[RMDB]
RNA sequence: GGGAACGACUCGAGUAGAGUCGAAAAUAUGGGCGCCUCUGCCACAUGGACCAUGUCUCAUUCGUCUCGGAAUGCCCCCCAGGCACAUCACAGACCCCCCUGCACGGGUGAAUGGCUGUGUGGACGAACAGCCUUAGCAGUUCGCUGCUAAGGCUGUAAAAGAAACAACAACAACAAC
Reactivity to DMS in 0.01 (KOAc 150mM, MgCl2 10mM, bicine 150mM(pH8.5), 24C), signal-to-noise 1, nucleotides 027 to 126: u000a030u000g010g050g020c070g010c080c030u000c090u020g020c050c020a010c060a020u000g010g000a120c000c020a030u000g010u020c100u000c010a080u000u000c040g020u010c080u010c080g030g020a070a120u010g000c030c020c030c010c040c060a120g000g010c000a050c070a020u010c030a110c060a080g010a300c010c000c000c000c000c000u000g040c130a060c240g000g000g000u010g010a080a050u000g000g020c020u010g000u030g000u010g010g020a090c070g000a060